[RMDB]
RNA sequence: GGGAACGACUCGAGUAGAGUCGAAAAGCCGCGGCUUCAGCAUCGAUCGGGUCGCUCUUGCCGCGCUGCCGACGGAUGCGCCGGUCGGGGCGGGGCACCUCAAGCACCUCGACGCCCUGCUCGUGCACGAUCGCGAGGCUUUCGAGCCUCGCGAUCGAAAAGAAACAACAACAACAAC
Reactivity to 2A3 in 0.01 (KOAc 150mM, MgCl2 10mM, bicine 150mM(pH8.5), 24C), signal-to-noise 1, nucleotides 027 to 126: g110c000c000g020c000g030g000c040u000u000c010a020g000c020a030u150c000g030a090u010c020g020g000g100u180c050g000c000u040c030u030u070g030c020c020g110c000g200c040u290g180c000c010g070a000c080g070g020a010u150g050c010g040c020c000g140g060u050c030g000g000g000g000c100g060g000g000g000c010a000c020c150u120c130a080a080g000c050a050c050c000u070c050g000a040c010g000c000c010c000u000g000c000u000c000g200u170g000c010a000
Source: RMDB library OK1LIB, as collected in RNAgym. An RNA of 177 nucleotides, treated with 2A3 and read out base by base. Reactivities are rounded to 0.1 and cut off at 0 and 3. The RNA was probed in 150 mM KOAc, 10 mM MgCl2 and 150 mM bicine (pH 8.5) at 24 C. 2A3 adducts were read by reverse transcription with SuperScript II with manganese.